[RMDB]
RNA sequence: GGGAACGACUCGAGUAGAGUCGAAAAGAGGAUUAGAAGGCUUACGCCAGAAGGGGUGGAGCAUCUUGAACUUGCUUAUGAUAGAGAGGGAGAAGAAAAUCCGAAACACCAAGGUAACAGUCAUGGCAAAACGGUGACUGUUCGCAGUCACCGUUUUAAAAGAAACAACAACAACAAC
Reactivity to DMS in 0.01 (KOAc 150mM, MgCl2 10mM, bicine 150mM(pH8.5), 24C), signal-to-noise 2, nucleotides 027 to 126: g010a130g000g010a100u030u000a070g050a090a200g050g010c030u060u020a140c190g030c010c030a080g020a180a060g000g010g000g000u010g030g040a070g020c130a090u000c020u020u000g000a110a090c120u000u000g010c020u000u030a040u010g000a090u000a090g000a020g000a060g070g000g000a080g040a050a060g010a060a060a000a060u000c010c000g000a080a090a150c100a130c020c020a020a140g000g000u010a050a050c100a070g010u000c010a040u000g000g020c140
Reactivity to 2A3 in 0.01 (KOAc 150mM, MgCl2 10mM, bicine 150mM(pH8.5), 24C), signal-to-noise 1, nucleotides 027 to 126: g170a030g030g000a000u000u190a070g050a130a000g060g000c030u090u100a070c070g000c020c050a080g100a030a000g100g160g030g000u170g040g000a000g030c000a000u030c030u000u070g090a070a100c000u060u030g060c000u100u100a080u240g140a070u080a050g040a030g000a060g030g000g000a010g100a090a050g000a000a030a000a000u010c000c000g000a000a060a000c000a000c070c000a030a130g100g000u050a100a000c010a010g030u030c000a050u210g000g050c050

This 177-nucleotide RNA was probed chemically with DMS and 2A3. DMS (dimethyl sulfate) methylates the pairing face of unpaired adenines and cytosines. Conditions: 150 mM KOAc, 10 mM MgCl2 and 150 mM bicine (pH 8.5), 24 C.